[RMDB]
RNA sequence: GGGAACGACUCGAGUAGAGUCGAAAAGGCUUCAAUGGCUACCCAGAAAUCAGCUUGUGGAUGCAGGCGUCGCGCAUUAUCCACGCGAUUUCGUGCGCCAGCACGCGUUUCCUCGCUUCCGAAGGGCCCACCGAUAGGCAUUCGUGCCUAUCGGUGGAAAAGAAACAACAACAACAAC
Reactivity to DMS in 0.01 (KOAc 150mM, MgCl2 10mM, bicine 150mM(pH8.5), 24C), signal-to-noise 1, nucleotides 027 to 126: g000g020c000u000u040c300a110a140u000g000g000c010u000a030c010c000c010a120g010a000a060a010u000c140a020g060c020u040u030g000u010g010g000a010u000g010c030a090g000g000c100g060u020c060g000c010g020c140a090u020u000a220u000c090c080a190c000g000c000g010a030u000u000u030c000g050u000g000c050g000c000c100a020g020c030a100c050g000c000g000u000u000u000c000c000u000c040g000c010u000u000c010c000g000a060a120g000g010g000c130
Reactivity to 2A3 in 0.01 (KOAc 150mM, MgCl2 10mM, bicine 150mM(pH8.5), 24C), signal-to-noise 5, nucleotides 027 to 126: g040g000c030u100u110c150a060a120u210g030g020c010u080a080c000c000c000a030g070a010a090a020u120c060a020g090c050u100u120g050u070g050g020a040u120g020c050a030g120g000c000g060u110c010g030c010g000c060a050u060u120a030u210c040c020a010c050g010c040g010a000u070u030u060c050g010u050g020c030g040c000c070a060g000c030a020c030g020c010g010u000u020u030c010c000u000c050g020c000u090u000c000c010g070a080a080g040g030g000c010